[RMDB]
RNA sequence: GGGAACGACUCGAGUAGAGUCGAAAAGCACUGCUCCGGCGAGGACGUGGGCGGACCGGCGGGAUGGGCUCCAGUCACCGGCUCGGUGGGCGACCGUCCCUUCCCAUGAGUCCACACGGUAAGCGCCCCAUAUAACCGUCUUCGGACGGUUAUAUGGAAAAGAAACAACAACAACAAC
Reactivity to 2A3 in 0.01 (KOAc 150mM, MgCl2 10mM, bicine 150mM(pH8.5), 24C), signal-to-noise 2, nucleotides 027 to 126: g030c040a030c260u120g000c030u020c030c070g060g000c050g020a060g080g080a050c020g020u030g020g070g080c090g030g020a010c010c030g040g040c060g000g010g020a050u020g030g020g000c080u040c030c030a020g040u030c000a000c050c040g280g000c150u120c120g050g000u070g040g040g000c040g060a010c020c000g170u180c010c010c050u040u030c010c000c000a060u190g040a050g040u020c000c000a010c010a010c000g040g000u040a060a060g050c010g010c060c000
Reactivity to DMS in 0.01 (KOAc 150mM, MgCl2 10mM, bicine 150mM(pH8.5), 24C), signal-to-noise 1, nucleotides 027 to 126: g010c080a160c080u000g020c050u000c060c060g000g000c020g040a100g030g030a140c040g030u010g010g000g030c120g010g000a050c030c020g020g020c270g020g000g020a020u000g000g000g010c030u000c040c020a120g000u000c010a030c020c020g000g040c110u010c090g010g000u010g010g010g000c040g000a060c040c030g010u010c000c000c000u000u020c020c000c000a100u030g010a120g040u000c000c010a100c050a030c030g000g020u010a150a150g010c030g000c030c030
About this RNA:
The record gives the reactivity of an RNA of 177 nucleotides to 2A3 and DMS. DMS adducts were read by reverse transcription with MarathonRT. Conditions: 150 mM KOAc, 10 mM MgCl2 and 150 mM bicine (pH 8.5), 24 C. The 2A3 profile rests on 1,739 reads.